[RMDB]
RNA sequence: GGGAACGACUCGAGUAGAGUCGAAAAAUACUUCGUAUGCACCACAAUAUGAAGGUCACGCGGCACCACCAGAGGAAAUACUGAAAUCUAGUCCUUUCGUUUGGUUUAAAGAUGCGUUAGAUGGUUAAGCAUAUGGACUGUUCGCAGUCCAUAUGCUAAAAGAAACAACAACAACAAC
Reactivity to 2A3 in 0.01 (KOAc 150mM, MgCl2 10mM, bicine 150mM(pH8.5), 24C), signal-to-noise 2, nucleotides 027 to 126: a000u130a010c010u010u000c000g020u050a010u040g020c060a000c000c000a030c070a020a090u100a050u110g070a080a020g060g000u060c020a010c040g090c010g040g000c000a000c050c020a000c010c030a030g040a020g080g100a020a010a120u160a070c040u130g000a130a000a000u100c030u030a070g090u070c000c050u000u000u040c070g030u040u030u050g050g000u000u110u120a050a150a000g100a090u070g010c030g000u080u070a070g020a060u070g050g060u020u050a040
Reactivity to DMS in 0.01 (KOAc 150mM, MgCl2 10mM, bicine 150mM(pH8.5), 24C), signal-to-noise 2, nucleotides 027 to 126: a080u090a080c040u000u030c000g000u000a060u000g020c050a120c000c010a030c060a120a020u000a030u000g010a000a020g000g030u020c000a000c000g000c000g020g000c100a010c080c050a050c060c010a040g000a160g000g010a070a010a090u010a060c130u000g000a070a140a010u060c100u000a020g000u000c000c090u000u040u000c120g000u000u000u020g020g000u030u000u030a060a050a010g000a160u020g000c130g000u030u000a010g020a070u040g010g000u010u030a150